[RMDB]
This 177-nucleotide RNA was probed chemically with 2A3 and DMS. For 2A3 the reverse transcriptase was SuperScript II with manganese. The RNA was probed in 150 mM KOAc, 10 mM MgCl2 and 150 mM bicine (pH 8.5) at 24 C.
RNA sequence: GGGAACGACUCGAGUAGAGUCGAAAAGUAGCCAUGAGUCAUCUUGAGACCUGUGUAUGAAGCAUUUUUCCCAGGCCAGGUGGCUAAGGGACCUCUCCCCGUUAACUCAACACCAGGGAUGGGGCGACGUCGCCAUAGUAUUCGUACUAUGGCGACGAAAAGAAACAACAACAACAAC
Reactivity to 2A3 in 0.01 (KOAc 150mM, MgCl2 10mM, bicine 150mM(pH8.5), 24C), signal-to-noise 1, nucleotides 027 to 126: g050u080a010g050c010c010a170u110g050a010g000u030c010a050u000c030u090u140g080a160g070a300c000c020u070g020u030g030u090a120u260g100a090a020g080c110a230u240u020u000u080u000c020c000c020a010g060g000c030c000a010g010g030u010g000g000c010u020a070a080g060g010g030a100c010c010u000c010u020c000c010c010c000g040u070u070a100a050c030u020c120a020a060c030a080c090c020a010g060g000g000a040u140g050g050g000g030c010g010a010
Reactivity to DMS in 0.01 (KOAc 150mM, MgCl2 10mM, bicine 150mM(pH8.5), 24C), signal-to-noise 2, nucleotides 027 to 126: g010u000a110g010c010c020a100u000g000a050g010u000c000a020u010c000u010u010g020a120g010a090c030c000u020g050u010g020u000a110u020g010a020a060g000c260a120u000u010u000u000u000c010c060c000a060g000g000c000c010a060g010g030u010g000g020c000u010a080a050g010g000g000a080c040c030u010c050u000c000c000c000c040g000u000u010a050a080c150u000c140a060a080c130a180c210c070a070g010g010g000a070u010g010g050g010g000c090g000a070